[RMDB]
RNA sequence: GGGAACGACUCGAGUAGAGUCGAAAACACUACAGAAGCUGUGGACAGUUCAUGGAAUUUACAAGGGAAACAGCGGCAAAAGUGGCAAAUGAGAUUUCAAUAUCAACAGAGACAGAAUUUCUCGUGCAACACCAAUCCCUUUCGAGGGAUUGGUGUUAAAAGAAACAACAACAACAAC
Reactivity to 2A3 in 0.01 (KOAc 150mM, MgCl2 10mM, bicine 150mM(pH8.5), 24C), signal-to-noise 3, nucleotides 027 to 126: c020a030c020u060a000c010a070g030a040a040g000c000u000g000u000g010g050a020c000a040g010u000u120c140a300u250g090g050a020a060u070u060u110a290c160a070a030g120g070g000a000a160a000c000a020g000c010g000g160c060a040a170a120a000g040u100g010g000c030a200a160a150u270g010a030g000a000u040u030u040c090a190a170u090a060u120c010a030a110c010a050g100a040g000a020c000a020g040a090a030u080u100u000c000u020c030g030u060g000c040
Reactivity to DMS in 0.01 (KOAc 150mM, MgCl2 10mM, bicine 150mM(pH8.5), 24C), signal-to-noise 2, nucleotides 027 to 126: c060a000c010u000a040c280a260g000a150a220g030c000u000g000u000g000g000a300c030a070g000u030u000c090a160u000g080g000a060a020u010u000u020a120c060a100a050g000g020g040a300a050a000c000a020g000c020g000g000c110a040a000a120a020g050u000g000g000c070a050a120a030u020g040a040g010a020u000u000u000c050a080a090u000a200u000c060a020a160c150a150g010a010g060a060c300a070g000a000a060u070u020u000c040u000c060g010u000g020c150
The data come from the RNA Mapping Database (RMDB), library OK1LIB. Structure probing data (2A3 and DMS) for a 177-nucleotide construct. For 2A3 the reverse transcriptase was SuperScript II with manganese. DMS adducts were read by reverse transcription with MarathonRT.